Source: RMDB library OK2TST, as collected in RNAgym. This 177-nucleotide RNA was probed chemically with DMS.
[RMDB]
RNA sequence: GGGAACGACUCGAGUAGAGUCGAAAAAUUGUAUGUGCUUCCGGAGGCGCUCGGAUGCAAGAAUCCAUGUUCUCCUUAAUGCAAAUGGCAAAAACAUCUGCGGCAUUAGCAAAGUUACACGAAGCUGCAGAUACUGAGCGUUCGCGCUCAGUAUCUGAAAAGAAACAACAACAACAAC
Reactivity to DMS in 0.01 (KOAc 150mM, MgCl2 10mM, bicine 150mM(pH8.5), 24C), signal-to-noise 1, nucleotides 027 to 126: a110u010u010g010u000a030u020g020u000g020c040u010u000c080c060g000g000a120g030g010c030g040c240u000c080g000g000a020u000g000c070a100a150g000a200a070u010c040c050a030u020g010u000u000c020u000c000c090u000u020a070a100u000g000c040a020a020a100u000g000g000c000a000a140a100a080a090c150a110u000c020u000g000c010g040g000c020a070u000u020a040g010c120a070a070a070g000u010u010a070c240a160c110g010a090a040g020c070u000g010